An RNA of 207 nucleotides, treated with DMS and 2A3 and read out base by base. For 2A3, 2,701 sequencing reads were counted. The DMS profile rests on 2,296 reads. It was measured as part of the RMDB library RNAMAK.
RNA sequence: GGGAACGACUCGAGUAGAGUCGAAAAGGGGUCCUACCUCCCUUGGAUUUAAGUAGCUUUUGACGCUCUGAAGCCUCCACGGAGCGAUAAGCUACUUUGUCAGGGAGGUAGGACGGAGGCACCCAAAGUACAAGUUAGGUUCGCCUAACUUGUACAACACUGGUACCUCUUUCGAGAGGUACCAGUGAAAAGAAACAACAACAACAAC
Reactivity to DMS in 0.01 (KOAc 150mM, MgCl2 10mM, bicine 150mM(pH8.5), 24C), signal-to-noise 1, nucleotides 027 to 156: g000g030g030g000u000c000c020u010a020c010c010u000c020c000c000u000u000g080g000a090u000u010u020a020a040g020u000a020g050c000u000u000u000u000g030a280c120g050c010u000c000u020g010a020a130g010c000c000u020c020c020a300c060g010g000a010g010c010g030a120u000a020a020g000c000u000a000c020u010u000u020g000u000c030a120g000g010g000a040g020g020u000a000g000g000a000c050g010g010a020g020g040c030a110c100c010c000a000a160a200g000u000a000c000a010a040g010u000u000a050g020g010u020u020c300g020c010c000u000a000a010c000u000u000g010u000a010c030a060a150
Reactivity to 2A3 in 0.01 (KOAc 150mM, MgCl2 10mM, bicine 150mM(pH8.5), 24C), signal-to-noise 3, nucleotides 027 to 156: g050g000g030g000u010c010c000u000a010c000c000u000c020c010c010u090u150g250g010a180u190u270u170a050a010g000u000a010g000c020u070u070u160u250g220a110c090g010c000u020c000u000g030a040a010g000c000c000u000c020c020a040c030g020g000a000g000c010g030a060u040a120a000g000c000u000a000c000u010u010u060g060u030c050a020g000g000g040a000g010g000u010a000g000g000a000c000g000g010a000g000g020c000a050c030c000c010a030a120a020g000u000a000c000a020a000g000u000u000a010g000g090u010u070c300g140c060c020u000a000a000c000u000u000g000u000a000c000a000a010